An RNA of 207 nucleotides, treated with DMS and 2A3 and read out base by base. The data come from the RNA Mapping Database (RMDB), library M2RFPK. For DMS, 2,175 sequencing reads were counted. DMS (dimethyl sulfate) methylates the pairing face of unpaired adenines and cytosines. The 2A3 profile rests on 1,731 reads.
[RMDB]
RNA sequence: GGGAACGACUCGAGUAGAGUCGAAAAUGAAGCAAAUCCAUAAUUGCCAAUGAUGAGCAAUUCGCUAUUGCCGCCUAAAAACGGUUAGCCGGGGCUGCUAGAGCCUUGUUACCAAAGAUAGCUGGCGUUACGGCAUGAUGGUUCGCCAUCAUGCCAAGACUUUUACACUGUUCGCAGUGUAAAAGUCAAAAGAAACAACAACAACAAC
Reactivity to DMS in 0.01 (KOAc 150mM, MgCl2 10mM, bicine 150mM(pH8.5), 24C), signal-to-noise 1, nucleotides 027 to 156: u020g000a140a110g050c040a100a140a130u010c030c030a130u000a050a070u020u000g040c010c010a160a220u000g000a150u000g010a110g010c010a000a050u000u000c060g000c000u000a040u010u000g030c030c000g000c050c050u000a020a140a150a130a150c010g010g000u010u010a070g040c020c050g030g020g000g050c060u000g020c080u010a080g050a090g040c000c000u000u000g010u000u000a090c040c030a000a080a080g000a150u000a080g030c030u010g010g010c050g030u010u000a100c180g020g050c010a020u020g010a030u000g040g010u010u000c300g000c050c000a010u000c000a020u000g000c000c000a000a020
Reactivity to 2A3 in 0.01 (KOAc 150mM, MgCl2 10mM, bicine 150mM(pH8.5), 24C), signal-to-noise 3, nucleotides 027 to 156: u120g020a060a000g060c030a030a090a050u080c020c010a020u100a120a080u070u030g000c020c030a120a140u300g110a110u080g020a120g010c000a010a020u090u100c030g000c010u040a040u060u170g010c000c000g000c000c020u060a060a020a000a000a000c010g000g040u060u010a010g010c020c000g010g000g000g000c010u050g020c010u050a020g000a000g120c000c010u020u010g030u010u090a080c030c010a060a060a000g040a040u030a030g030c020u010g050g010c050g100u130u120a060c060g020g000c010a000u000g000a000u000g000g070u040u060c110g050c050c000a000u010c000a010u010g000c000c000a000a000